[RMDB]
This 177-nucleotide RNA was probed chemically with DMS and 2A3. DMS (dimethyl sulfate) methylates the pairing face of unpaired adenines and cytosines. For DMS the reverse transcriptase was MarathonRT. 2A3 adducts were read by reverse transcription with SuperScript II with manganese. Values cover nucleotides 27 to 126. It was measured as part of the RMDB library 15KREP.
RNA sequence: GGGAACGACUCGAGUAGAGUCGAAAAAUUGCUUGUGAAAAUCCAUUCAUGGUUAACCAAUUGGCUUAUAGCUCUAGUGCAAAUGGCAGCCUGGUUGGCACAACUUUGCAGGGCAAGCCUAUUGGUAUCUAGAGUUAGAGUUCGCUCUAACUCUAGAAAAAGAAACAACAACAACAAC
Reactivity to DMS in 0.01 (KOAc 150mM, MgCl2 10mM, bicine 150mM(pH8.5), 24C), signal-to-noise 3, nucleotides 027 to 126: a120u010u010g030c070u000u000g020u000g000a060a040a090a130u000c050c020a160u000u000c070a070u000g010g000u010u010a140a060c010c010a000a010u010u000g020g000c010u010u000a160u010a230g010c000u000c000u000a140g010u010g010c010a000a010a020u000g010g030c270a150g000c000c010u000g010g030u020u000g010g000c020a090c080a090a080c170u010u000u000g020c020a040g000g010g030c010a040a010g000c000c010u000a030u000u000g010g000u000a030
Reactivity to 2A3 in 0.01 (KOAc 150mM, MgCl2 10mM, bicine 150mM(pH8.5), 24C), signal-to-noise 3, nucleotides 027 to 126: a000u100u110g030c060u100u120g010u020g050a050a040a040a060u030c030c000a060u040u080c030a030u060g000g100u110u120a040a010c000c000a000a010u000u020g020g000c010u050u060a070u150a230g000c000u020c020u060a100g190u030g070c010a010a020a050u070g040g050c060a020g030c020c010u180g270g080u210u110g040g000c010a010c020a090a050c020u000u020u010g000c020a000g000g000g000c000a000a000g000c000c010u000a000u010u010g010g000u000a020
The RNA was probed in 150 mM KOAc, 10 mM MgCl2 and 150 mM bicine (pH 8.5) at 24 C.